Chemical mapping of a 177-nucleotide RNA with DMS. It was measured as part of the RMDB library M2PK50.
RNA sequence: GGGAACGACUCGAGUAGAGUCGAAAAUUGUACACCUUCGGGUGUACAAGCUGUCUAGUCGCUAGGAAACGAUCAAAGCUAGCGACUAGACUUUAUUGAUCGCGACGUGCGCUUUCGAGCGCACGAAUCCUUUGGUUCGUUUCGACGAACCAAAGGAAAAAGAAACAACAACAACAAC
Reactivity to DMS in 0.01 (KOAc 150mM, MgCl2 10mM, bicine 150mM(pH8.5), 24C), signal-to-noise 1, nucleotides 027 to 126: u000u000g040u000a000c000a010c000c000u000u000c230g070g000g050u010g010u000a000c000a000a000g000c190u000g000u000c000u000a020g000u000c000g040c010u000a000g010g000a100a180a120c180g000a100u000c080a110a130a180g010c030u010a030g000c000g000a010c000u000a010g000a000c000u010u000u010a070u010u000g010a040u010c070g070c100g010a210c040g030u000g000c000g030c000u000u000u010c120g010a010g000c000g000c000a000c010g010a030a070

For DMS, 779 sequencing reads were counted. DMS (dimethyl sulfate) methylates the pairing face of unpaired adenines and cytosines.